Source: RMDB library M2PK90, as collected in RNAgym. An RNA of 177 nucleotides, treated with DMS and 2A3 and read out base by base. The reactions ran in a buffer of 150 mM KOAc, 10 mM MgCl2 and 150 mM bicine (pH 8.5), at 24 C. For DMS, 3,720 sequencing reads were counted.
RNA sequence: GGGAACGACUCGAGUAGAGUCGAAAAAUACAGCGUAAUCGAGCGGAGGAAAACGGCAGUCCGAAAAUCCGGUACGAUUAUGAUCCCACUGCGUCGACGCUAGAUGCAGAACCGGAUUGCCGAGGAAUGUUUUUGCUAUAUUCGUAUAGCAAAAACAAAAAGAAACAACAACAACAAC
Reactivity to DMS in 0.01 (KOAc 150mM, MgCl2 10mM, bicine 150mM(pH8.5), 24C), signal-to-noise 4, nucleotides 027 to 126: a060u010a100c200a130g010c040g020u000a020a020u010c010g030a160g010c030g020g000a120g040g020a070a060a120a130c050g000g000c020a010g000u000c030c010g010a070a050a080a080u000c000c010g010g000u010a090c060g000a010u000u000a010u000g000a090u000c000c000c010a260c050u000g010c010g000u000c010g010a130c280g010c150u010a080g000a030u000g010c020a030g010a150a110c300c010g000g000a020u000u000g000c020c010g000a130g020g010a070a100
Reactivity to 2A3 in 0.01 (KOAc 150mM, MgCl2 10mM, bicine 150mM(pH8.5), 24C), signal-to-noise 3, nucleotides 027 to 126: a000u210a010c080a060g070c010g020u040a020a030u030c010g010a020g140c020g010g040a030g020g150a050a180a060a010c020g010g000c000a000g010u000c020c020g060a060a100a020a090u020c000c010g000g060u130a100c030g010a010u020u040a030u080g070a040u000c010c000c000a020c020u000g000c020g010u020c010g060a090c130g030c300u080a020g000a020u010g000c000a020g030a070a010c050c020g000g000a000u000u010g000c000c000g020a020g040g130a130a090
Annotation:
For 2A3, 4,517 sequencing reads were counted.